[RMDB]
RNA sequence: GGGAACGACUCGAGUAGAGUCGAAAAUGUCACUCAGUAGCGAGGGAUGCAAUUAAUUGCAUCUACACCAAGCUCAAGGCUUGGAUUUCGACUAGUGUCGAGUCGUUCCCACUCGCUACGCCCACAAUAACCAUCAAGACUUCGGUCUUGAUGGUUAAAAAGAAACAACAACAACAAC
Reactivity to DMS in 0.01 (KOAc 150mM, MgCl2 10mM, bicine 150mM(pH8.5), 24C), signal-to-noise 2, nucleotides 027 to 126: u030g010u000c170a060c140u060c110a230g030u000a020g000c020g000a020g010g000g000a000u000g020c000a000a030u000u000a170a100u000u000g000c000a020u000c010u010a110c110a230c010c000a010a000g000c010u010c130a160a080g000g060c000u000u010g000g010a230u000u000u010c000g000a020c000u000a070g000u010g020u000c000g000a000g000u000c000g000u000u000c000c000c000a000c000u000c000g010c000u000a010c020g010c030c010c030a090c160a070a140
Record summary: The data come from the RNA Mapping Database (RMDB), library M2PK90. The record gives the reactivity of an RNA of 177 nucleotides to DMS. The reactions ran in a buffer of 150 mM KOAc, 10 mM MgCl2 and 150 mM bicine (pH 8.5), at 24 C.